[RMDB]
RNA sequence: GGGAACGACUCGAGUAGAGUCGAAAAAGUCCAUACGUGGACAAGCGGCAAUGAUGAGAAUGCAAUUCUAUGAUGUACUUUGAUUUUUCUAUGAUGUACUUUAAUUCUAUGAUACUCUGAGCCAUAAGAUUCGAAGCCUGUUCGCAGGCUUCGAAUCAAAAGAAACAACAACAACAAC
Reactivity to 2A3 in 0.01 (KOAc 150mM, MgCl2 10mM, bicine 150mM(pH8.5), 24C), signal-to-noise 1, nucleotides 027 to 126: a000g000u000c000c000a000u000a000c100g060u000g000g080a000c070a000a000g210c090g050g000c000a160a160u210g090a180u150g000a040g100a150a030u100g030c000a040a000u000u130c090u060a070u150g220a220u190g000u030a060c000u020u130u000g070a030u040u060u290u000u000c000u090a120u110g000a000u000g000u000a000c030u040u110u110a000a120u000u160c000u010a000u030g000a040u000a120c000u000c000u030g000a000g150c000c000a210u190a300a000

Background
Chemical mapping of a 177-nucleotide RNA with 2A3. The RNA was probed in 150 mM KOAc, 10 mM MgCl2 and 150 mM bicine (pH 8.5) at 24 C. It was measured as part of the RMDB library RFM100. For 2A3, 262 sequencing reads were counted.